RNA sequence: GGGAACGACUCGAGUAGAGUCGAAAACUGUCAACCUGCCGACGAACAACGAUGACGUGUCCCUGAUCAUGUACACGAGCGGCACGACGGGCGGGCCGAAGGGCGUCAUGCACACGUACGGGUCGAAGCUGCAGGUUACGUUCGCGUGACCUGCAGCAAAAGAAACAACAACAACAAC
Reactivity to DMS in 0.01 (KOAc 150mM, MgCl2 10mM, bicine 150mM(pH8.5), 24C), signal-to-noise 2, nucleotides 027 to 126: c050u010g000u010c040a130a070c090c000u000g020c010c010g000a080c050g000a100a020c130a090a090c100g020a110u000g000a030c030g000u050g000u000c080c080c010u080g000a140u000c020a070u010g010u010a140c190a000c120g000a100g020c070g000g050c100a020c090g000a010c030g000g010g030c100g000g000g000c100c000g000a090a080g000g000g000c000g020u060c130a050u000g000c030a070c010a080c130g020u000a020c070g000g000g000u030c030g010a060a080
Reactivity to 2A3 in 0.01 (KOAc 150mM, MgCl2 10mM, bicine 150mM(pH8.5), 24C), signal-to-noise 4, nucleotides 027 to 126: c010u040g040u090c020a000a090c030c020u010g020c000c010g030a070c020g090a060a090c040a040a010c030g080a110u080g030a050c020g050u060g050u020c010c000c000u030g050a090u050c050a150u110g090u110a060c040a010c140g040a060g020c020g020g000c040a000c030g070a000c010g020g010g030c030g000g030g000c010c000g050a030a070g060g020g010c030g030u040c000a040u160g040c010a030c010a000c060g010u090a060c020g030g020g040u050c030g040a060a040

Chemical mapping of a 177-nucleotide RNA with DMS and 2A3. Source: RMDB library OK1LIB, as collected in RNAgym. Reactivities are given for positions 27 through 126. For 2A3, 3,090 sequencing reads were counted. 2A3 adducts were read by reverse transcription with SuperScript II with manganese. The reactions ran in a buffer of 150 mM KOAc, 10 mM MgCl2 and 150 mM bicine (pH 8.5), at 24 C.